[RMDB]
RNA sequence: GGGAACGACUCGAGUAGAGUCGAAAAGGCGGCACAUUUGUUAAAAGAUAACGCAAGUGUCCAAAGGCAGGCUCAGUGAGAACAGAAAUCUCACGUAGAGUAAAAGGGCAAAAGCCUGCUUGAUUCUACUUCUUUACUUGUUCGCAAGUAAAGAAGUAAAAGAAACAACAACAACAAC
Reactivity to DMS in 0.01 (KOAc 150mM, MgCl2 10mM, bicine 150mM(pH8.5), 24C), signal-to-noise 2, nucleotides 027 to 126: g010g000c140g030g040c130a010c010a070u000u000u000g000u000u010a050a110a160a110g010a180u010a060a050c120g030c090a070a080g000u010g000u000c040c130a100a070a070g020g000c000a020g000g010c000u000c010a190g000u000g020a010g000a000a110c060a250g000a130a120a100u000c000u010c030a000c000g010u010a140g000a170g000u000a020a050a050a100g010g000g000c210a010a140a140a090g000c000c000u000g000c010u000u000g000a180u000u000c070u000
Reactivity to 2A3 in 0.01 (KOAc 150mM, MgCl2 10mM, bicine 150mM(pH8.5), 24C), signal-to-noise 2, nucleotides 027 to 126: g060g010c050g000g010c060a000c010a050u040u060u050g020u020u030a080a110a070a100g140a170u090a090a000c040g000c030a030a070g000u000g000u000c010c000a000a020a070g020g000c000a010g000g000c010u010c050a010g000u000g000a000g000a050a050c110a070g160a140a140a150u010c000u020c010a000c000g010u040a010g000a000g060u060a070a080a050a000g060g060g030c010a100a130a030a010g010c000c000u020g000c000u000u020g020a020u070u050c010u010
Source: RMDB library RFMREP, as collected in RNAgym. Chemical mapping of a 177-nucleotide RNA with DMS and 2A3. Values cover nucleotides 27 to 126. For DMS the reverse transcriptase was MarathonRT.